[RMDB]
This 177-nucleotide RNA was probed chemically with DMS and 2A3. The RNA was probed in 150 mM KOAc, 10 mM MgCl2 and 150 mM bicine (pH 8.5) at 24 C. For 2A3, 1,830 sequencing reads were counted.

RNA sequence: GGGAACGACUCGAGUAGAGUCGAAAAAGUGUUGUCGCCGACCAGCACCGCCAAGACCAGGGCACGGCGCCGUUCUCGGUGGUCGAGGGGAAUGGCGUGUACCGAGGCCAGCGCCAGCACGAACAGCUCGAACAGGUAGGUUCGCCUACCUGUUCGAAAAAGAAACAACAACAACAAC
Reactivity to DMS in 0.01 (KOAc 150mM, MgCl2 10mM, bicine 150mM(pH8.5), 24C), signal-to-noise 2, nucleotides 027 to 126: a180g000u010g010u000u000g010u000c010g060c000c010g040a040c040c010a110g020c050a050c020c060g000c010c030a030a090g000a290c000c010a200g000g020g030c050a120c030g010g020c000g000c030c010g010u000u010c180u000c030g020g040u000g010g010u010c030g030a160g000g000g000g020a200a200u000g000g000c010g000u000g000u000a040c030c100g010a120g020g010c010c010a060g010c000g000c040c000a030g010c010a010c040g010a030a090c250a140g020c110
Reactivity to 2A3 in 0.01 (KOAc 150mM, MgCl2 10mM, bicine 150mM(pH8.5), 24C), signal-to-noise 2, nucleotides 027 to 126: a020g030u030g010u020u000g010u020c010g000c020c000g010a060c010c000a000g010c030a000c020c050g030c020c000a030a010g140a030c000c000a080g100g120g060c130a070c030g000g040c010g030c000c000g060u230u080c180u110c100g040g010u110g000g050u030c000g000a100g000g020g020g030a000a050u020g030g000c080g010u060g010u030a050c010c040g080a140g010g000c030c010a000g020c000g000c000c010a000g050c020a000c010g000a080a020c030a020g040c010